[RMDB]
RNA sequence: GGGAACGACUCGAGUAGAGUCGAAAAGGGUUUGAGCCAUCGCCCGAAUAAGAUGGGUGAUACAAGUCGACAUUGUACGCGACGUAGUACGUACUCAUUAGUGCGAAAGCACGGUUAGUCCGACUUGGCAGGGACGAUCUUCUGUCAAUACUUAGAAAAUACUGGGUAUCUUCGGAUACCCAGUAUUAAAAGAAACAACAACAACAAC
Reactivity to 2A3 in 0.01 (KOAc 150mM, MgCl2 10mM, bicine 150mM(pH8.5), 24C), signal-to-noise 2, nucleotides 027 to 156: g020g020g030u070u110u160g070a010g020c010c000a000u010c000g000c000c000c010g040a110a160u260a060a050g100a060u050g000g020g010u060g000a010u090a110c070a040a040g000u000c000g020a020c050a100u110u230g060u060a050c060g000c040g060a020c030g010u000a020g030u020a080c050g010u010a020c000u030c050a040u070u130a000g000u000g000c010g030a090a010a000g000c010a010c000g020g030u050u030a010g020u020c080c000g000a050c020u040u040g000g030c000a010g030g020g030a030c080g060a100u050c060u140u010c000u050g100u040c040a030a100u030a110c060u140u140a040g130a080a210
Reactivity to DMS in 0.01 (KOAc 150mM, MgCl2 10mM, bicine 150mM(pH8.5), 24C), signal-to-noise 3, nucleotides 027 to 156: g010g010g000u000u000u020g000a210g010c040c030a070u000c010g000c000c000c020g000a100a120u000a060a100g010a140u010g000g010g020u020g010a080u000a080c040a090a050g000u000c010g000a040c050a170u000u000g000u000a050c070g040c000g000a130c140g010u000a140g030u000a030c010g020u000a040c010u010c150a120u010u000a090g040u000g000c000g000a120a080a200g030c000a010c000g010g010u010u010a090g020u000c030c010g020a050c080u010u000g020g040c000a060g020g000g000a060c120g000a120u000c090u000u000c050u010g020u000c030a040a100u000a080c080u010u000a120g010a080a090